[RMDB]
RNA sequence: GGGAACGACUCGAGUAGAGUCGAAAACGCUUGCGUGAACACCGGGACUUUAUUGCAAGCUGGGCCUGUUGAUUUAGAUUCCGCUGCAAAGAAUCAGGGCUGAGUAUAACGGUUUUAGCGGAUACACCCGUAGAAGUCACGGGCUCCAUGCCGCGGACGUAGGUCAAUACUUCGGUAUUGACCUACGAAAAGAAACAACAACAACAAC
Reactivity to 2A3 in 0.01 (KOAc 150mM, MgCl2 10mM, bicine 150mM(pH8.5), 24C), signal-to-noise 2, nucleotides 027 to 156: c040g000c020u000u020g000c000g020u040g030a080a040c060a080c140c090g060g070g020a020c080u110u110u100a030u080u220g000c030a040a020g010c010u040g030g030g010c020c030u060g040u090u070g040a120u020u040u090a040g020a090u040u000c010c000g000c010u020g000c040a120a100a050g060a060a040u050c030a040g040g000g000c000u030g010a010g080u140a120u040a260a030c070g010g020u070u070u050u130a020g030c020g000g020a010u020a000c080a040c010c040c000g000u030a030g060a180a000g040u050c030a010c050g000g020g000c000u000c000c000a030u080g000c010c000g020c000g010g000a010
Reactivity to DMS in 0.01 (KOAc 150mM, MgCl2 10mM, bicine 150mM(pH8.5), 24C), signal-to-noise 1, nucleotides 027 to 156: c040g040c010u010u000g000c000g020u000g010a060a040c010a120c030c040g040g030g020a120c100u010u000u000a060u010u020g040c000a010a040g010c000u010g000g000g010c020c020u000g020u010u000g020a070u000u000u010a090g020a140u000u000c010c020g010c040u000g040c120a120a110a140g010a000a000u000c030a120g010g010g060c060u000g000a190g000u010a080u020a090a100c070g000g000u000u000u000u000a050g040c050g020g000a140u000a060c080a070c040c010c000g020u020a140g110a130a140g020u000c040a070c020g030g040g000c020u010c080c020a090u040g040c020c030g010c010g050g020a120